The data come from the RNA Mapping Database (RMDB), library RFM100. Chemical mapping of a 177-nucleotide RNA with DMS and 2A3.

[RMDB]
RNA sequence: GGGAACGACUCGAGUAGAGUCGAAAAAACUUUAAUAUAAACCCUUGCCAUUCUGAGGCGGCUCCCUAUAAUGCGCAUCCAUCGACACGGCGCUGUGAGCAACUUCACAGAGUGGCCGGGAAGAACAAAAGUUCAUUUUCUUCGGAAAAUGAACUUUAAAAGAAACAACAACAACAAC
Reactivity to DMS in 0.01 (KOAc 150mM, MgCl2 10mM, bicine 150mM(pH8.5), 24C), signal-to-noise 1, nucleotides 027 to 126: a050a090c020u000u000u000a020a100u040a190u000a110a060a200c100c000c000u000u010g030c000c000a040u010u000c030u000g030a090g020g010c300g050g010c040u000c000c090c100u030a090u000a090a020u000g000c040g010c000a060u070c100c070a100u110c070g010a060c010a270c120g000g000c000g010c000u000g030u020g000a040g050c000a010a050c010u000u060c060a070c190a000g070a000g000u000g050g060c010c300g000g000g000a030a000g030a120a110c100a020
Reactivity to 2A3 in 0.01 (KOAc 150mM, MgCl2 10mM, bicine 150mM(pH8.5), 24C), signal-to-noise 2, nucleotides 027 to 126: a000a030c300u300u260u230a300a100u290a090u120a030a260a180c000c000c000u000u070g000c010c000a000u010u000c010u020g020a000g080g000c080g000g000c000u000c050c020c020u070a070u050a180a150u140g010c020g020c030a070u000c090c070a150u180c090g100a150c040a000c180g110g010c000g000c000u020g000u040g000a000g060c000a010a030c000u120u030c070a030c000a060g000a010g000u000g010g000c000c000g000g020g030a040a040g050a030a080c140a120
Notes: 2A3 adducts were read by reverse transcription with SuperScript II with manganese. The RNA was probed in 150 mM KOAc, 10 mM MgCl2 and 150 mM bicine (pH 8.5) at 24 C. DMS adducts were read by reverse transcription with MarathonRT. In probing experiments dimethyl sulfate is read out at A N1 and C N3, which are open when not base-paired. For DMS, 816 sequencing reads were counted.